The record gives the reactivity of an RNA of 177 nucleotides to DMS and 2A3. For DMS, 4,124 sequencing reads were counted. It was measured as part of the RMDB library OK2TRN. For DMS the reverse transcriptase was MarathonRT. The reactions ran in a buffer of 150 mM KOAc, 10 mM MgCl2 and 150 mM bicine (pH 8.5), at 24 C. DMS (dimethyl sulfate) methylates the pairing face of unpaired adenines and cytosines.
RNA sequence: GGGAACGACUCGAGUAGAGUCGAAAACACUGAGACUGUCUGAGUGUGAGUGUCACUGUGUGUCACAGUCUCACUCACUCAGAGUGUCUGUGAGAGUCUCUGUCACUGACAGUCUGACAGACUGUGAAUCGGAAGAGCAGUUCGCUGCUCUUCCGAUAAAAGAAACAACAACAACAAC
Reactivity to DMS in 0.01 (KOAc 150mM, MgCl2 10mM, bicine 150mM(pH8.5), 24C), signal-to-noise 2, nucleotides 027 to 126: c090a120c130u010g010a100g010a060c020u000g000u020c000u000g000a160g040u010g000u010g000a040g000u010g000u000c080a010c000u000g020u010g010u050g010u000c040a030c000a010g010u000c040u000c010a010c000u000c000a000c020u000c000a020g010a050g010u000g020u000c000u000g010u010g010a070g000a100g020u010c140u000c030u000g000u000c020a030c030u000g000a030c010a010g000u000c010u010g000a220c040a040g010a030c000u000g010u010g010a090
Reactivity to 2A3 in 0.01 (KOAc 150mM, MgCl2 10mM, bicine 150mM(pH8.5), 24C), signal-to-noise 2, nucleotides 027 to 126: c060a000c020u100g060a010g080a070c000u040g050u130c010u060g040a060g160u190g030u010g080a010g000u020g020u020c010a010c000u020g020u030g030u060g270u300c020a000c010a010g010u000c010u000c000a000c000u020c000a010c010u020c010a000g010a010g070u010g010u000c020u010g020u010g030a080g020a000g120u030c070u000c050u240g130u040c040a040c080u050g070a010c010a020g120u000c000u010g030a020c000a010g020a020c010u020g030u010g090a040